[RMDB]
RNA sequence: GGGAACGACUCGAGUAGAGUCGAAAAGUAGUCCCAGCUACUUGGGAGGCUGAAACAGGAGAAUCACUUGAACCUGGGAGGCGGAGAUUGCAGUGAGCUGAGAUUGCACCACCUGGGUGACAGAGCAAAUAGGAUCGAGAUUCGUCUCGAUCCUAUUAAAAGAAACAACAACAACAAC
Reactivity to DMS in 0.01 (KOAc 150mM, MgCl2 10mM, bicine 150mM(pH8.5), 24C), signal-to-noise 3, nucleotides 027 to 126: g020u010a070g020u000c020c010c020a150g000c020u000a030c020u000u000g000g010g010a110g020g020c040u010g010a090a140a100c070a080g000g010a090g020a100a090u010c090a070c120u010u010g010a120a070c050c000u000g000g000g010a110g020g000c060g000g010a110g010a050u010u010g020c020a040g020u000g000a090g010c030u010g010a050g000a080u010u000g010c030a080c040c030a070c070c020u000g010g000g020u000g000a120c090a050g000a080g010c110a040
Reactivity to 2A3 in 0.01 (KOAc 150mM, MgCl2 10mM, bicine 150mM(pH8.5), 24C), signal-to-noise 1, nucleotides 027 to 126: g020u030a010g040u040c000c000c010a000g000c020u090a050c010u050u040g020g060g000a010g000g110c040u040g050a070a130a000c010a040g040g070a060g050a070a090u060c040a020c150u080u130g010a060a070c000c000u010g000g080g000a020g000g030c050g060g000a090g040a060u130u110g090c020a020g030u000g150a020g000c020u000g040a000g000a110u040u130g000c030a030c010c010a030c000c060u070g000g000g050u040g010a030c020a070g060a030g080c050a050